[RMDB]
Source: RMDB library OK1LIB, as collected in RNAgym. Chemical mapping of a 177-nucleotide RNA with 2A3 and DMS.
RNA sequence: GGGAACGACUCGAGUAGAGUCGAAAACGCCGGACAGCGGUCACAGACACUAGAUCUGACGAAAAGUGAGGUCGGAUGUGACGGCGAGAAAGCGAGCGCAAUCUCAAGCGUUACGAACGAGCGGCGAUAUAUUAUAUAUAUUCGUAUAUAUAAUAUAAAAAGAAACAACAACAACAAC
Reactivity to 2A3 in 0.01 (KOAc 150mM, MgCl2 10mM, bicine 150mM(pH8.5), 24C), signal-to-noise 4, nucleotides 027 to 126: c010g000c010c010g020g090a070c050a040g000c040g100g000u000c000a010c000a010g220a100c020a050c130u110a080g000a020u000c000u080g070a010c020g050a200a160a160a080g020u040g080a010g000g000u020c000g030g000a020u020g010u000g000a000c010g100g010c000g000a030g070a060a060a000g050c020g000a010g000c000g000c010a090a180u080c090u070c170a090a050g000c000g020u030u090a100c020g030a110a020c050g020a040g110c000g000g010c000g010a000
Reactivity to DMS in 0.01 (KOAc 150mM, MgCl2 10mM, bicine 150mM(pH8.5), 24C), signal-to-noise 4, nucleotides 027 to 126: c030g030c000c000g010g010a200c150a160g010c000g000g000u010c000a010c010a020g000a140c110a110c110u040a140g000a020u000c000u000g000a030c010g010a100a060a110a220g000u010g000a060g010g030u010c010g000g020a180u000g000u000g010a010c000g000g020c010g010a090g010a090a150a180g000c020g010a060g000c000g020c010a050a080u040c210u020c220a160a100g000c000g010u000u010a050c060g000a060a080c070g000a130g000c010g000g010c010g010a210

Annotation:
The 2A3 profile rests on 2,344 reads. The RNA was probed in 150 mM KOAc, 10 mM MgCl2 and 150 mM bicine (pH 8.5) at 24 C. Reactivities are given for positions 27 through 126. DMS adducts were read by reverse transcription with MarathonRT.